[RMDB]
RNA sequence: GGGAACGACUCGAGUAGAGUCGAAAACUAUUUAUAGACAGAACAGUGGAAAACGUAUAUCGCUAUAAACCUUAAACACCGAUUCUUCCAGUCGUACGAUUCCACAUAGGCGAGGCAUAAGCGAAAGGUAUUGUUUAAUAUUCGUAUUGAGCAAUGCAAAAGAAACAACAACAACAAC
Reactivity to 2A3 in 0.01 (KOAc 150mM, MgCl2 10mM, bicine 150mM(pH8.5), 24C), signal-to-noise 9, nucleotides 027 to 126: c010u010a040u030u090u020a090u030a030g080a030c050a010g080a130a010c020a020g010u030g040g030a050a050a000a000c000g010u010a040u020a010u070c010g000c020u010a010u020a070a060a030c000c010u040u040a050a040a000c050a020c020c010g030a030u050u000c010u060u000c020c010a020g010u020c010g010u020a020c020g020a040u040u000c010c010a020c010a030u040a010g050g000c030g030a020g040g020c030a050u060a130a040g030c020g080a090a020a000g110
Reactivity to DMS in 0.01 (KOAc 150mM, MgCl2 10mM, bicine 150mM(pH8.5), 24C), signal-to-noise 9, nucleotides 027 to 126: c050u010a080u020u010u010a050u020a060g010a080c080a140g010a080a070c120a090g010u010g000g010a050a030a070a080c060g010u010a040u020a090u010c060g010c010u000a040u010a040a060a070c090c040u010u000a060a080a070c110a060c090c010g000a050u010u010c040u010u010c020c030a060g000u010c050g010u000a040c050g000a140u010u000c010c010a030c060a080u020a040g000g010c030g000a050g010g010c060a040u010a050a070g010c050g000a050a060a070g000
This 177-nucleotide RNA was probed chemically with 2A3 and DMS. The RNA was probed in 150 mM KOAc, 10 mM MgCl2 and 150 mM bicine (pH 8.5) at 24 C. The DMS profile rests on 53,845 reads. The 2A3 profile rests on 39,417 reads.